[RMDB]
RNA sequence: GGGAACGACUCGAGUAGAGUCGAAAAAAGACUACAUGGAGAUGCUGAAAGAGAUGUCAGUGAUAGAUAACACUGACGUUGAUUACACCCACAGAGAGAUAGCUGAUCUCAAUCAGCUUACAGAUAAGCUACAAAAGCUGUUUAAAGAGGGAAGAGCACCAGUUAUGAUAUUCGUAUCAUAACUGGUAAAAGAAACAACAACAACAAC
Reactivity to DMS in 0.01 (KOAc 150mM, MgCl2 10mM, bicine 150mM(pH8.5), 24C), signal-to-noise 5, nucleotides 027 to 156: a030a070g020a130c020u000a030c040a090u000g020g020a170g010a090u000g020c020u000g000a070a080a080g010a300g010a020u000g010u000c000a020g020u000g010a210u000a120g020a190u020a100a140c010a040c000u000g010a020c000g020u010u000g000a300u000u000a080c050a080c020c000c020a140c080a060g020a120g000a140g000a100u000a030g040c000u000g010a040u000c090u000c110a070a110u000c040a060g020c050u000u000a130c090a080g010a080u000a030a040g000c020u000a180c080a050a030a080a060g020c010u010g010u000u000u000a040a050a090g010a060g000g010g010a050a050g000a070g040c170
Reactivity to 2A3 in 0.01 (KOAc 150mM, MgCl2 10mM, bicine 150mM(pH8.5), 24C), signal-to-noise 6, nucleotides 027 to 156: a000a000g080a060c070u080a010c070a070u080g020g010a060g020a030u060g030c050u060g040a070a080a040g070a010g000a020u040g000u000c000a000g000u010g030a060u110a220g140a110u140a200a030c000a000c010u000g000a000c000g000u010u000g000a000u000u050a040c040a030c040c030c010a030c060a020g100a000g010a010g010a030u060a050g010c020u010g020a050u030c050u020c200a060a080u010c000a000g010c000u010u040a020c020a000g050a030u070a130a020g010c020u040a050c080a030a110a020a010g010c020u010g090u060u140u110a090a120a020g030a040g000g020g000a040a050g030a020g060c020
An RNA of 207 nucleotides, treated with DMS and 2A3 and read out base by base. For 2A3, 4,986 sequencing reads were counted. Conditions: 150 mM KOAc, 10 mM MgCl2 and 150 mM bicine (pH 8.5), 24 C. For 2A3 the reverse transcriptase was SuperScript II with manganese. Source: RMDB library OK3TST, as collected in RNAgym. As a SHAPE reagent, 2A3 marks flexible, mostly unpaired nucleotides at the ribose 2'-OH. For DMS the reverse transcriptase was MarathonRT.